About this RNA
Structure probing data (2A3 and DMS) for a 177-nucleotide construct. The reactions ran in a buffer of 150 mM KOAc, 10 mM MgCl2 and 150 mM bicine (pH 8.5), at 24 C.

RNA sequence: GGGAACGACUCGAGUAGAGUCGAAAAAUGUGUGUAAGCACAAGGAAGAGACACCCAAUAACAGGUCUGUGAUGCCCGUAGAUGUUCGGGGCUCCACGCGCACUACAAUGAGUGGUGGUGCUAUAAGAGAUGCGUUUUAAUUCGUUAAAACGCAUCUAAAAGAAACAACAACAACAAC
Reactivity to 2A3 in 0.01 (KOAc 150mM, MgCl2 10mM, bicine 150mM(pH8.5), 24C), signal-to-noise 7, nucleotides 027 to 126: a000u060g030u000g010u000g050u090a120a040g020c000a010c010a010a040g130g020a060a100g050a010g040a040c020a080c030c010c030a040a020u150a100a040c100a050g030g100u070c040u060g070u080g040a070u160g020c010c000c020g010u080a050g020a240u130g080u130u070c040g010g000g000g030c010u020c020c000a030c020g060c010g000c030a010c020u070a010c030a070a190u210g030a080g090u060g030g010u000g000g010u030g040c010u070a080u030a220a100g030
Reactivity to DMS in 0.01 (KOAc 150mM, MgCl2 10mM, bicine 150mM(pH8.5), 24C), signal-to-noise 6, nucleotides 027 to 126: a060u010g010u010g010u000g000u040a100a110g010c010a000c020a060a120g000g020a090a090g010a110g000a070c130a130c010c010c040a110a100u020a060a090c210a090g000g000u000c030u000g010u010g020a090u010g010c020c000c010g010u020a060g010a130u020g010u020u010c070g000g000g010g000c040u000c060c030a070c050g030c100g000c020a020c020u000a030c120a130a090u020g000a100g010u010g010g020u000g000g000u010g000c010u010a050u030a060a110g010